RNA sequence: GGGAACGACUCGAGUAGAGUCGAAAAAGCGCCUCUCAGCCGGCCUUUGCCGGUCCGAGCGCUGAGCCUUGGGUUGCGGGAAGCGGGACCACGUGAGGCUCUCGCCAGGCAGUCCCGUCGGCUGGGCAUGCCCUCCAGCAUUCGUGCUGGAGGGCAUAAAAGAAACAACAACAACAAC
Reactivity to DMS in 0.01 (KOAc 150mM, MgCl2 10mM, bicine 150mM(pH8.5), 24C), signal-to-noise 1, nucleotides 027 to 126: a020g020c090g000c020c110u000c030u000c090a300g000c030c000g020g000c000c300u000u000u000g010c050c010g000g010u000c010c010g000a300g010c020g000c060u000g000a080g020c030c000u000u000g000g000g020u000u010g040c040g020g040g010a220a120g040c000g020g000g010a140c000c000a210c290g110u010g000a270g000g000c210u000c010u000c000g060c000c000a300g000g000c070a040g010u020c000c000c000g000u040c170g100g000c010u020g010g000g020c270
Reactivity to 2A3 in 0.01 (KOAc 150mM, MgCl2 10mM, bicine 150mM(pH8.5), 24C), signal-to-noise 1, nucleotides 027 to 126: a000g040c020g010c000c000u000c000u000c000a020g000c000c000g000g020c060c000u130u150u190g050c010c000g030g000u050c000c000g030a020g000c050g000c010u020g000a000g000c010c040u090u120g060g030g000u130u070g070c000g000g040g040a200a020g060c000g030g000g090a040c010c010a130c070g130u080g190a170g000g010c000u020c000u000c000g000c000c000a000g030g020c000a040g150u140c000c000c010g040u070c060g030g050c030u050g000g000g090c060